Conditions: 150 mM KOAc, 10 mM MgCl2 and 150 mM bicine (pH 8.5), 24 C. The record gives the reactivity of an RNA of 177 nucleotides to DMS.
RNA sequence: GGGAACGACUCGAGUAGAGUCGAAAAUACUAGCAUUCGGUUCCAACCCUGGAUGGAUACUGAAAGGUUGGCUGAGUUCCUUCCUCCGGCCUUGGUUCCGAUGCUCCAUCCAAGGCCGGAAACCAAAUUUCAUGGGUAGAUUCGUCUACCCAUGAAAAAAAGAAACAACAACAACAAC
Reactivity to DMS in 0.01 (KOAc 150mM, MgCl2 10mM, bicine 150mM(pH8.5), 24C), signal-to-noise 3, nucleotides 027 to 126: u010a090c050u010a060g010c060a080u000u000c010g030g000u000u000c010c010a030a070c090c040c110u000g010g000a130u000g010g010a100u000a060c030u000g000a160a080a070g010g000u000u000g000g030c120u000g010a100g010u010u010c020c030u000u010c110c090u000c000c000g010g000c010c000u000u010g000g000u000u010c070c060g010a100u000g010c060u020c050c040a060u000c010c000a010a020g000g010c010c020g000g010a010a010a050c140c150a070a060a110

For DMS the reverse transcriptase was MarathonRT.